[RMDB]
RNA sequence: GGGAACGACUCGAGUAGAGUCGAAAACAAGGUCUGACGGAGGGUGGCUCGGCCACUGCGGGCAAGACCUACACCGUAAUCCGUACCAAGCAGAACCUCAAGGGUCUGACCGAUGGCUGGAUCGCAAGCAAGUUCGUGACCGAGGAUGGUCUGCGUCGUCAUGUAUCAACUUCGGUUGAUACAUGACAAAAGAAACAACAACAACAAC
Reactivity to DMS in 0.01 (KOAc 150mM, MgCl2 10mM, bicine 150mM(pH8.5), 24C), signal-to-noise 1, nucleotides 027 to 156: c050a110a100g020g010u010c030u000g020a110c050g040g000a110g000g030g000u010g030g010c070u030c110g070g000c020c010a070c010u000g000c000g000g000g030c030a090a050g010a300c000c000u030a010c030a300c000c010g000u000a080a070u000c020c000g020u010a160c020c010a110a190g000c000a050g010a020a140c000c000u000c080a140a190g030g030g000u000c000u000g000a080c060c030g020a110u000g010g010c030u000g040g010a060u020c030g040c040a070a120g000c080a100a050g000u000u010c010g000u010g010a080c020c030g000a050g000g010a150u000g000g000u000c050u010g000c060g000u000c120
Reactivity to 2A3 in 0.01 (KOAc 150mM, MgCl2 10mM, bicine 150mM(pH8.5), 24C), signal-to-noise 4, nucleotides 027 to 156: c040a030a050g020g040u020c030u040g030a030c020g080g070a120g080g080g000u040g010g000c020u060c240g170g010c010c020a040c060u060g000c020g000g040g030c040a110a020g020a020c000c000u020a010c050a010c030c000g070u070a040a070u080c030c020g040u070a060c030c000a040a030g010c010a020g040a040a100c000c010u080c080a110a150g150g010g010u030c030u050g050a090c030c030g020a050u090g060g000c000u020g000g070a220u120c070g010c110a000a070g020c020a090a050g040u080u080c040g060u090g010a010c000c010g000a020g070g020a050u110g040g000u000c020u000g030c020g040u070c010
Chemical mapping of a 207-nucleotide RNA with DMS and 2A3. It was measured as part of the RMDB library OK3TST. For DMS, 2,842 sequencing reads were counted. 2A3 is a SHAPE reagent: it acylates the 2'-hydroxyl of flexible nucleotides of all four kinds. Reactivities are given for positions 27 through 156. The RNA was probed in 150 mM KOAc, 10 mM MgCl2 and 150 mM bicine (pH 8.5) at 24 C.